[RMDB]
RNA sequence: GGGAACGACUCGAGUAGAGUCGAAAACACCUGUUGCAGCAUAAAACACCUCUAAUUCAGGUUCGAGCGCUUACCGUCUGACACCGUUAAAGAUAGUAAGCACAACCCCAACGGUUGCUCUAGAAUUUCGCCUUUGGUCGGCAUUCUAGCUAAGACACUAAACAGGCUAGUUCGCUAGCCUGUUUAGAAAAGAAACAACAACAACAAC
Reactivity to DMS in 0.01 (KOAc 150mM, MgCl2 10mM, bicine 150mM(pH8.5), 24C), signal-to-noise 2, nucleotides 027 to 156: c030a140c010c000u010g000u010u000g010c050a080g020c050a170u020a050a100a070a150c060a060c030c030u000c040u000a070a130u000u010c080a020g040g010u000u000c070g010a140g040c010g050c010u000u010a010c010c010g030u020c010u000g010a300c120a130c060c120g010u000u000a120a200a050g010a050u000a020g000u000a000a000g040c020a020c020a060a100c010c000c030c060a070a110c110g010g020u000u000g000c020u010c000u020a030g000a050a060u000u000u010c020g040c020c040u000u000u040g030g020u000c060g030g020c050a060u000u010c000u000a030g020c090u000a040a100g000a200c040a110
Reactivity to 2A3 in 0.01 (KOAc 150mM, MgCl2 10mM, bicine 150mM(pH8.5), 24C), signal-to-noise 3, nucleotides 027 to 156: c080a020c020c030u030g070u090u080g050c040a070g000c030a100u180a180a160a080a000c080a080c050c040u090c040u080a160a110u150u080c020a030g030g000u060u120c090g070a070g070c090g020c030u010u010a000c000c010g000u000c010u030g030a020c030a090c140c060g090u070u060a110a040a000g000a000u010a010g010u000a020a000g030c010a000c010a050a020c040c000c010c000a000a010c000g060g010u020u050g020c010u000c000u030a000g010a040a040u020u090u110c040g020c000c020u130u070u210g150g020u140c030g000g000c000a000u030u000c000u000a010g000c010u030a050a000g030a030c030a000